[RMDB]
RNA sequence: GGGAACGACUCGAGUAGAGUCGAAAAUGAUCGAGAGAUCUAACGAUGUACGCGAGUCAACAGCACAGACUCGAGCGAAAGCUCGGUCGAAAGACCGCGUACAUCGGUCGGCAAGUGUCUAGUCAAAAUCACCUAUACGUUUCGACGUAUAGGUGAUAAAAGAAACAACAACAACAAC
Reactivity to DMS in 0.01 (KOAc 150mM, MgCl2 10mM, bicine 150mM(pH8.5), 24C), signal-to-noise 9, nucleotides 027 to 126: u010g010a010u000c010g010a270g000a210g010a000u000c000u010a080a100c010g010a000u000g000u000a010c000g020c000g000a090g010u000c010a090a110c150a110g020c180a080c200a150g000a010c000u010c020g010a010g010c000g010a110a090a150g000c000u000c000g010g010u000c000g000a070a080a150g000a010c010c000g010c000g010u000a010c010a000u000c000g010g010u000c060g010g010c060a080a100g010u010g000u000c030u000a090g010u010c070a050a070a080
Reactivity to 2A3 in 0.01 (KOAc 150mM, MgCl2 10mM, bicine 150mM(pH8.5), 24C), signal-to-noise 3, nucleotides 027 to 126: u080g000a010u010c010g010a010g000a010g000a110u000c000u040a100a020c010g010a010u010g000u010a000c000g000c010g060a080g050u040c010a020a060c040a100g220c050a050c020a100g010a010c040u060c180g010a000g000c000g040a130a010a000g000c010u000c000g000g000u000c000g000a020a020a000g000a000c010c010g000c000g000u000a000c000a000u000c000g000g000u010c020g010g000c040a190a190g080u050g060u160c030u140a070g080u030c000a070a030a000
Source information: An RNA of 177 nucleotides, treated with DMS and 2A3 and read out base by base. Values cover nucleotides 27 to 126.